[RMDB]
RNA sequence: GGGAACGACUCGAGUAGAGUCGAAAAUCCUAAGUCGGAAGGGAGAAGGCGGGUUGCGAAGAACAGUGUCGGAAACGACACUGGGAGCAACAGCCUUCGAAGAACUUCCGAUAUGGAAAAACCAACGAUAUACAUGUUCGCAUGUAUAUCGUUGGAAGCUUGUUAUAAGGUUCGCCUUAUAACAAGCAAAAGAAACAACAACAACAAC
Reactivity to 2A3 in 0.01 (KOAc 150mM, MgCl2 10mM, bicine 150mM(pH8.5), 24C), signal-to-noise 4, nucleotides 027 to 156: u020c000c000u030a110a020g020u000c000g010g010a010a010g010g000g010a030g000a020a020g020g020c080g090g300g040u000u000g030c050g150a300a070g020a110a020c010a010g000u000g000u000c000g030g030a080a060a060c030g000a000c000a000c000u000g010g000g000a030g000c000a000a010c000a000g010c000c000u000u010c010g000a010a000g010a000a000c000u000u000c000c000g000a000u000a050u060g020g010a040a110a010a010a020c000c000a000a000c000g010a000u000a000u000a000c010a000u010g050u070u100c300g000c170a000u000g000u000a000u000a000u000c000g000u000u000g000g000a000a010
Reactivity to DMS in 0.01 (KOAc 150mM, MgCl2 10mM, bicine 150mM(pH8.5), 24C), signal-to-noise 1, nucleotides 027 to 156: u000c020c000u000a100a300g010u020c000g000g070a030a070g030g000g000a180g000a000a000g040g060c000g070g070g060u010u020g000c050g010a100a190g010a040a160c000a020g030u000g000u010c030g020g030a100a130a300c010g010a000c050a000c010u030g020g070g010a300g030c000a030a060c030a160g000c000c000u010u000c010g000a060a140g010a130a210c010u000u000c000c010g010a000u000a080u010g040g000a100a040a100a170a140c010c000a030a010c000g000a010u000a000u010a010c000a040u000g010u010u000c300g000c010a020u000g010u000a000u000a000u010c000g010u000u000g000g010a010a150
About this RNA: The record gives the reactivity of an RNA of 207 nucleotides to 2A3 and DMS. For DMS the reverse transcriptase was MarathonRT. Conditions: 150 mM KOAc, 10 mM MgCl2 and 150 mM bicine (pH 8.5), 24 C.